The record gives the reactivity of an RNA of 207 nucleotides to 2A3 and DMS. The RNA was probed in 150 mM KOAc, 10 mM MgCl2 and 150 mM bicine (pH 8.5) at 24 C.
RNA sequence: GGGAACGACUCGAGUAGAGUCGAAAAUGACGCAGCAAAAGAGAUUUAAAGUCCCGCAAAAUGUCGCUGUUUGAGACUGGCUUUGGCAUUUUGUUAAAUUUGAGAAAGUCCUAUGGUUGUAGACGUUGAUGUAGCAAGGUGUUUGGACAGGGGUUCGGUUAUUCACUUUCUUCGGAAAGUGAAUAACAAAAGAAACAACAACAACAAC
Reactivity to 2A3 in 0.01 (KOAc 150mM, MgCl2 10mM, bicine 150mM(pH8.5), 24C), signal-to-noise 1, nucleotides 027 to 156: u120g030a000c020g050c050a060g000c000a160a020a200a000g110a040g030a000u110u110u210a200a210a020g030u030c000c000c010g000c010a020a000a010a050u040g010u020c010g000c050u050g070u050u030u050g060a060g010a020c030u020g010g010c010u020u050u080g000g010c000a000u030u000u000u040g010u000u030a100a110a210u150u090u110g020a020g020a050a050a000g010u010c010c010u080a100u130g070g000u030u030g040u010a010g040a050c020g000u020u000g040a070u060g030u030a000g030c020a040a000g000g000u040g010u020u090u010g000g010a020c000a000g010g040g020g020u070u040c010g030
Reactivity to DMS in 0.01 (KOAc 150mM, MgCl2 10mM, bicine 150mM(pH8.5), 24C), signal-to-noise 1, nucleotides 027 to 156: u000g020a150c090g030c070a110g050c030a040a070a130a120g010a140g010a080u000u000u000a100a150a220g000u000c020c040c020g000c040a050a040a100a040u010g000u000c010g040c060u010g040u010u000u010g020a100g010a120c060u000g000g000c010u000u000u010g040g020c000a040u000u000u000u000g000u000u000a050a080a100u000u000u030g100a080g010a040a030a060g040u000c010c030u000a110u000g010g010u010u010g000u010a100g010a060c100g000u000u000g000a100u000g000u000a100g010c060a040a050g010g010u020g000u000u000u000g020g010a080c080a010g010g000g000g010u000u000c040g020